[RMDB]
RNA sequence: GGGAACGACUCGAGUAGAGUCGAAAAGACUGCGUGCACUGGAGACGAUAUCGAGCCGGAAAUUAAUCGAUAAUGUCUCAAGUAGUGGAUACGAUCCGGCAAGUAUCGACUACGUGUGCUCGUAGGAACUAGGGUGGCGAUUCGUCGCCACCCUAGUAAAAGAAACAACAACAACAAC
Reactivity to 2A3 in 0.01 (KOAc 150mM, MgCl2 10mM, bicine 150mM(pH8.5), 24C), signal-to-noise 2, nucleotides 027 to 126: g030a000c010u000g000c000g000u040g000c010a000c010u020g160g010a000g020a000c030g130a020u010a010u070c000g000a010g000c000c000g000g130a060a080a140u300u300a140a250u120c000g000a000u000a000a080u170g000u000c000u000c020a050a000g020u010a000g020u000g070g000a000u000a000c000g000a050u040c000c000g000g000c120a120a020g000u000a000u010c020g020a000c000u000a020c020g020u050g010u000g000c000u000c000g000u000a000g010g030a010

The record gives the reactivity of an RNA of 177 nucleotides to 2A3. 2A3 adducts were read by reverse transcription with SuperScript II with manganese. Reactivities are given for positions 27 through 126. The RNA was probed in 150 mM KOAc, 10 mM MgCl2 and 150 mM bicine (pH 8.5) at 24 C. It was measured as part of the RMDB library OK1LIB.